[RMDB]
RNA sequence: GGGAACGACUCGAGUAGAGUCGAAAAUCAGCCGCUAAGACGAUAACCUUGCUUCGGUUCUCCACACCAGCGGGACCGGUGCCUGGUACGAAUCCUGGGGUCGUCGUUGUACUCGUGCGAGUAAUCCACGAUCGCUACAACGCGCUAAGCAAUGGAGGAUCCCCAAAUGGUUCGCCAUUUGGGGAUCAAAAGAAACAACAACAACAAC
Reactivity to 2A3 in 0.01 (KOAc 150mM, MgCl2 10mM, bicine 150mM(pH8.5), 24C), signal-to-noise 1, nucleotides 027 to 156: u100c020a000g080c060c030g050c140u100a120a010g040a090c040g070a150u040a150a040c000c000u000u030g010c000u020u150c000g050g000u160u030c070u040c020c080a130c020a070c040c050a080g000c120g020g000g000a010c000c000g000g000u000g000c000c020u060g000g050u040a070c030g010a030a070u050c000c000u050g000g000g010g050u090c050g030u080c020g000u020u000g000u000a000c020u000c000g000u050g070c110g020a010g070u170a050a160u000c000c000a000c000g030a050u100c170g000c180u000a000c000a000a000c000g010c000g000c000u010a020a070g030c040a080a080u090g130g000a030g020